An RNA of 177 nucleotides, treated with DMS and 2A3 and read out base by base.
The DMS profile rests on 2,239 reads.
Values cover nucleotides 27 to 126.
The reactions ran in a buffer of 150 mM KOAc, 10 mM MgCl2 and 150 mM bicine (pH 8.5), at 24 C.
Source: RMDB library M2PK50, as collected in RNAgym.
[RMDB]
RNA sequence: GGGAACGACUCGAGUAGAGUCGAAAAGCCUUGUUGUUCGCAACAAGGCAAAUGGGACGGGUCGGGAGGGGGAUACUCGCGGUCCCUAGAAGAAUCCAGACUAAAGGCCAAGGUUCGCCUUGGCCAAGCUAUCAGAAUACUUCGGUAUUCUGAUAGCAAAAGAAACAACAACAACAAC
Reactivity to DMS in 0.01 (KOAc 150mM, MgCl2 10mM, bicine 150mM(pH8.5), 24C), signal-to-noise 2, nucleotides 027 to 126: g010c000c000u000u010g010u000u000g010u010u010c250g020c000a010a010c020a020a010g000g040c000a000a030a110u000g000g010g000a110c100g000g000g000u010c100g030g020g000a160g010g020g010g000g010a070u000a040c030u030c050g020c090g010g000u000c000c000c010u030a060g000a090a130g000a070a100u010c030c020a080g010a140c190u000a030a100a090g010g020c000c010a010a010g000g020u000u010c260g010c000c000u000u010g000g000c000c000a000a010
Reactivity to 2A3 in 0.01 (KOAc 150mM, MgCl2 10mM, bicine 150mM(pH8.5), 24C), signal-to-noise 2, nucleotides 027 to 126: g000c010c000u000u000g000u000u010g010u020u070c220g010c070a000a000c000a000a010g000g010c000a010a000a010u050g010g020g100a030c090g020g000g160u230c090g030g020g070a220g060g040g000g020g000a020u070a110c030u030c030g060c040g060g010u050c010c000c020u040a060g060a100a010g050a040a040u040c050c000a010g080a070c070u140a140a100a130g000g020c000c000a000a000g000g000u030u090c180g050c030c000u000u000g000g000c000c000a000a000